[RMDB]
RNA sequence: GGGAACGACUCGAGUAGAGUCGAAAAUGCUGAUCGAUGGUAUCAGCCGGGCCAUGUGCUGCCCAGGUUGCUCGGCAGUCGCACAAACUAUCAUAGAUAGCGGCCUACACAAUUACUACCGACAUCGUCACUCUAUCUUUUUCGAAAGAUAGAGUGAAAAAGAAACAACAACAACAAC
Reactivity to DMS in 0.01 (KOAc 150mM, MgCl2 10mM, bicine 150mM(pH8.5), 24C), signal-to-noise 9, nucleotides 027 to 126: u010g010c020u000g000a020u000c030g020a100u010g030g010u020a050u000c030a040g010c020c230g000g010g010c010c030a270u000g010u000g010c010u000g010c000c000c090a040g010g010u010u010g010c060u000c300g010g010c010a020g010u010c110g030c030a040c090a080a130a160c010u000a010u000c020a180u010a150g000a020u000a010g000c050g010g010c020c010u000a100c150a060c200a070a060u000u000a050c050u010a080c020c020g000a080c120a080u010c120g000
Reactivity to 2A3 in 0.01 (KOAc 150mM, MgCl2 10mM, bicine 150mM(pH8.5), 24C), signal-to-noise 9, nucleotides 027 to 126: u100g000c000u010g010a030u030c070g070a120u180g120g040u160a010u020c010a000g000c010c020g010g000g000c010c000a040u060g010u020g010c010u010g000c010c010c010a020g180g050u290u300g160c010u000c000g020g000c010a010g030u170c060g000c040a040c070a040a080a030c020u020a020u050c050a220u080a210g030a010u010a010g030c030g010g000c000c010u070a040c090a000c010a070a130u180u130a070c040u060a070c010c030g090a050c030a110u100c050g060
Chemical mapping of a 177-nucleotide RNA with DMS and 2A3. 2A3 adducts were read by reverse transcription with SuperScript II with manganese. It was measured as part of the RMDB library OK2TST. Values are in units of 0.01, from 0 to 300, in steps of 10.